The data come from the RNA Mapping Database (RMDB), library RNAMAK. An RNA of 207 nucleotides, treated with 2A3 and read out base by base. 2A3 is a SHAPE reagent: it acylates the 2'-hydroxyl of flexible nucleotides of all four kinds. Reactivities are given for positions 27 through 156. For 2A3 the reverse transcriptase was SuperScript II with manganese.

[RMDB]
RNA sequence: GGGAACGACUCGAGUAGAGUCGAAAAGAUAUGGAUGUUCGGGAGCUUGGAUUUACCACUUUCUCUAGUUCGGAAACGAACUAGAAUAAGUGGUUGUCAGCUCAUGAACAUCCUAAGUCAAAAGUCUCGUUUAGGGCUUCGGCCCUAAACGAGACAAGGUUUAAUUAUACUUCGGUAUAAUUAAACCAAAAGAAACAACAACAACAAC
Reactivity to 2A3 in 0.01 (KOAc 150mM, MgCl2 10mM, bicine 150mM(pH8.5), 24C), signal-to-noise 2, nucleotides 027 to 156: g020a010u090a040u110g010g000a000u000g000u010u020c070g040g050g010a030g020c050u170u210g200g020a080u250u190u180a020c000c020a020c000u010u010u010c100u030c010u020a000g010u020u000c020g040g050a100a060a060c000g010a000a000c030u020a000g020a000a000u040a010a000g000u000g000g000u000u000g000u000c000a000g000c010u000c030a020u040g000a000a000c000a000u000c000c000u000a000a020g050u000c020a110a080a110a030g000u000c010u010c000g000u010u000u010a000g000g000g040c020u060u170c300g150g000c020c030c040u000a000a000a010c000g010a020g000a000c010a010a010